Structure probing data (DMS) for a 177-nucleotide construct.
The data come from the RNA Mapping Database (RMDB), library RFMREP.
For DMS, 557 sequencing reads were counted.
Conditions: 150 mM KOAc, 10 mM MgCl2 and 150 mM bicine (pH 8.5), 24 C.
Reactivities are rounded to 0.1 and cut off at 0 and 3.
For DMS the reverse transcriptase was MarathonRT.
[RMDB]
RNA sequence: GGGAACGACUCGAGUAGAGUCGAAAACCUGGUUGGCAAUCAGGUGUCGAGUGCAAGUGCACAAGGGAGCUUGACUGUGAGACUGACAGGUCGAGCAGGGACGAAAGUCGGGACUAGUGAUCCGGCACGCUUCAAUCAUCUUCGGAUGAUUGAAGCGAAAAGAAACAACAACAACAAC
Reactivity to DMS in 0.01 (KOAc 150mM, MgCl2 10mM, bicine 150mM(pH8.5), 24C), signal-to-noise 1, nucleotides 027 to 126: c000c010u020g030g050u000u000g000g030c110a120a080u000c030a020g010g000u000g000u030c060g030a170g000u000g010c020a250a050g070u000g020c010a110c080a140a170g020g000g000a140g040c020u000u000g000a110c030u000g000u000g000a130g000a090c060u000g070a060c290a120g000g030u000c090g020a200g020c000a100g000g000g000a090c050g010a040a060a170g020u000c000g010g000g010a120c050u000a050g000u000g000a050u020c010c000g050g000c110a160